[RMDB]
RNA sequence: GGGAACGACUCGAGUAGAGUCGAAAAAGCUGGUUGAAGGUCCUGUAGACAGUAGCUUAGGAAGGCGGUCUUCAUUCCGUCCGGUCAGGAUAUGCACGGCACAAGGUAGCACGCUUCGUGCUAGUGGAUCAUCAGAUGCUUUCGAGCAUCUGAUGAUAAAAGAAACAACAACAACAAC
Reactivity to 2A3 in 0.01 (KOAc 150mM, MgCl2 10mM, bicine 150mM(pH8.5), 24C), signal-to-noise 4, nucleotides 027 to 126: a000g120c110u140g050g030u110u060g070a090a020g060g010u060c030c010u060g050u040a010g010a060c050a090g090u210a010g030c010u130u030a030g070g090a080a020g030g000c000g000g010u020c000u110u060c060a060u120u040c000c020g030u010c000c050g050g020u070c040a050g010g010a010u050a020u110g080c030a000c020g010g000c010a000c000a070a020g010g060u050a020g080c050a020c090g100c080u110u150c130g010u000g010c000u040a100g040u030g030g070
Reactivity to DMS in 0.01 (KOAc 150mM, MgCl2 10mM, bicine 150mM(pH8.5), 24C), signal-to-noise 5, nucleotides 027 to 126: a070g010c020u000g010g030u000u010g010a140a070g030g000u000c030c020u010g010u010a120g020a160c070a080g000u010a050g020c060u010u000a100g000g020a100a070g010g020c060g010g000u020c100u020u030c130a150u020u050c020c030g030u000c020c050g000g000u000c050a060g000g000a050u000a060u010g000c030a060c010g000g050c030a050c040a080a060g010g000u000a060g010c140a110c150g000c060u000u010c110g030u000g010c010u010a050g030u000g010g010